[RMDB]
RNA sequence: GGGAACGACUCGAGUAGAGUCGAAAAAUUGAUAAACGGCACCUAUAAGGUGGUGCCGAACCAGCGUGACCUACCAACACGCAACGAGCAGUCUGGUAUGACUGCAAACCUAUGGUAAACUAGAUAACUAUGUCUAACCUUUCGAGGUUAGACAUAGAAAAGAAACAACAACAACAAC
Reactivity to 2A3 in 0.01 (KOAc 150mM, MgCl2 10mM, bicine 150mM(pH8.5), 24C), signal-to-noise 2, nucleotides 027 to 126: a000u110u090g040a030u030a140a130a000c010g000g030c020a010c010c020u110a090u050a300a120g180g050u090g020g000u000g030c000c000g010a010a010c020c010a020g000c010g000u000g030a100c010c020u040a020c010c000a040a010c000a010c000g010c010a020a010c030g010a010g000c000a000g010u000c000u120g110g150u300a150u260g000a030c000u000g000c000a000a000a020c040c020u050a100u070g000g030u030a080a070a090c090u080a130g020a140u110a030a080
Reactivity to DMS in 0.01 (KOAc 150mM, MgCl2 10mM, bicine 150mM(pH8.5), 24C), signal-to-noise 3, nucleotides 027 to 126: a050u000u020g020a140u010a090a090a100c030g000g020c000a000c000c000u000a210u000a100a110g030g030u000g000g000u000g010c000c000g010a020a020c100c060a130g000c000g000u000g020a010c030c030u010a010c020c010a190a050c000a000c020g000c000a110a130c230g010a150g020c010a010g010u000c000u010g000g010u020a070u000g000a010c010u000g020c000a020a060a120c010c010u000a010u000g010g030u000a020a080a160c270u000a050g010a110u000a120a190
Background:
This 177-nucleotide RNA was probed chemically with 2A3 and DMS. For DMS the reverse transcriptase was MarathonRT. For DMS, 2,117 sequencing reads were counted. Source: RMDB library M2PK90, as collected in RNAgym. The 2A3 profile rests on 1,621 reads.